This 177-nucleotide RNA was probed chemically with 2A3 and DMS.
The data come from the RNA Mapping Database (RMDB), library OK1LIB.
The DMS profile rests on 2,765 reads.
[RMDB]
RNA sequence: GGGAACGACUCGAGUAGAGUCGAAAAUAUGGCAGCAUUGAUAGAGACUAACUGGACUCUUGAUAACAACGAGGUCAGGGGGUUAAAAAAAUUCUACCUACUAUCCAGCAGAGUCAGGAGCCUUAUAUCUAGCUAACCCAUUCGUGGGUUAGCUAGAAAAAGAAACAACAACAACAAC
Reactivity to 2A3 in 0.01 (KOAc 150mM, MgCl2 10mM, bicine 150mM(pH8.5), 24C), signal-to-noise 2, nucleotides 027 to 126: u170a040u050g030g000c000a060g020c050a090u010u130g000a040u140a100g120a000g010a070c050u050a080a010c040u130g020g020a050c000u020c020u060u070g070a080u160a300a070c060a020a040c090g040a010g000g020u020c020a000g000g010g020g010g020u060u070a000a100a060a000a000a000a130u130u020c050u080a050c000c000u010a020c000u020a050u030c000c020a010g000c000a000g020a000g180u040c020a020g030g060a020g080c000c000u100u100a300u010a030
Reactivity to DMS in 0.01 (KOAc 150mM, MgCl2 10mM, bicine 150mM(pH8.5), 24C), signal-to-noise 2, nucleotides 027 to 126: u010a060u000g010g000c030a050g020c000a110u030u010g000a130u020a080g000a170g000a060c050u000a090a100c070u010g000g000a050c000u000c010u010u000g040a110u050a050a050c130a080a060c140g010a080g000g010u000c040a020g000g010g010g000g000u000u010a000a000a020a050a030a020a090u000u040c140u020a030c070c020u020a040c060u000a050u000c000c000a050g000c030a060g010a080g000u010c020a080g000g010a120g020c030c000u000u010a040u020a070
Description:
DMS adducts were read by reverse transcription with MarathonRT. The RNA was probed in 150 mM KOAc, 10 mM MgCl2 and 150 mM bicine (pH 8.5) at 24 C.